RNA sequence: GGGAACGACUCGAGUAGAGUCGAAAAAGUCAGAGGGCGCUACCAUGCAAACUAGGGCUGGCUACUCAUGCACAGAAUCACAUCUCGAUAAUUGUCAGUGCAAGAAGGACAAUUAUACCAUUUAAUGAAAACGUUUACCUGUUCGCAGGUAAACGAAGGGACGGUAUAUGUUCGCAUAUACCGUCCCAAAAGAAACAACAACAACAAC
Reactivity to 2A3 in 0.01 (KOAc 150mM, MgCl2 10mM, bicine 150mM(pH8.5), 24C), signal-to-noise 2, nucleotides 027 to 156: a010g030u030c010a010g020a020g010g020g030c010g000c000u110a200c040c090a070u180g010c070a020a050a100c060u100a050g000g000g120c010u020g000g000c000u030a060c000u040c020a040u020g030c060a030c010a030g090a040a050u140c060a010c020a140u060c040u000c110g030a020u010a010a030u000u010g030u000c000a060g120u020g160c060a070a000g130a030a070g070g030a000c000a000a000u020u000a050u010a100c010c040a030u120u110u240a140a150u160g110a030a030a010a000c020g000u000u000u000a000c020c000u010g010u030u000c090g020c070a000g000g010u000a030a000a000c000g010a010a030